[RMDB]
RNA sequence: GGGAACGACUCGAGUAGAGUCGAAAAAAUAGUUGAGGAAGAUAGGAAUUCUCCUCAUAAUAGUCGCACACAUCCUCUAGGCCAGUCAUGCCCGGAGUGGGAUACAUGUACUCCAUUGACAGCAGGAAGAAAAUGCCAGGACUUCUACUUACAAUUAGACGAUAGUAUAGUUCGCUAUACUAUCGUCAAAAGAAACAACAACAACAAC
Reactivity to DMS in 0.01 (KOAc 150mM, MgCl2 10mM, bicine 150mM(pH8.5), 24C), signal-to-noise 2, nucleotides 027 to 156: a120a060u010a110g010u000u000g010a070g010g000a120a080g000a060u000a100g020g010a120a140u030u000c000u000c000c010u010c020a030u020a060a060u000a140g000u000c030g000c080a080c110a070c080a070u000c030c010u010c010u000a110g050g020c020c050a130g020u000c090a060u010g000c000c030c030g000g030a070g030u000g000g020g010a150u000a030c070a070u010g030u000a050c030u000c000c020a120u000u010g020a130c030a120g060c020a070g050g010a040a080g000a060a060a040a070u000g010c030c010a080g020g000a090c020u010u000c030u010a030c060u000u000a100c050a070a040u020u000a170
Reactivity to 2A3 in 0.01 (KOAc 150mM, MgCl2 10mM, bicine 150mM(pH8.5), 24C), signal-to-noise 4, nucleotides 027 to 156: a000a020u130a030g050u030u020g010a010g000g010a120a110g020a090u150a090g160g040a090a050u100u010c010u000c010c000u010c010a000u060a020a030u040a010g100u050c010g000c030a010c000a010c010a100u060c010c030u020c060u110a060g000g040c030c010a020g030u050c010a010u080g010c020c020c020g050g000a040g030u110g010g030g020a020u100a050c040a020u080g040u070a060c010u000c020c010a050u020u060g030a020c020a020g070c010a000g040g020a050a020g010a020a100a000a010u060g010c020c010a020g000g040a020c010u060u010c000u070a080c030u120u060a050c030a060a180u130u120a070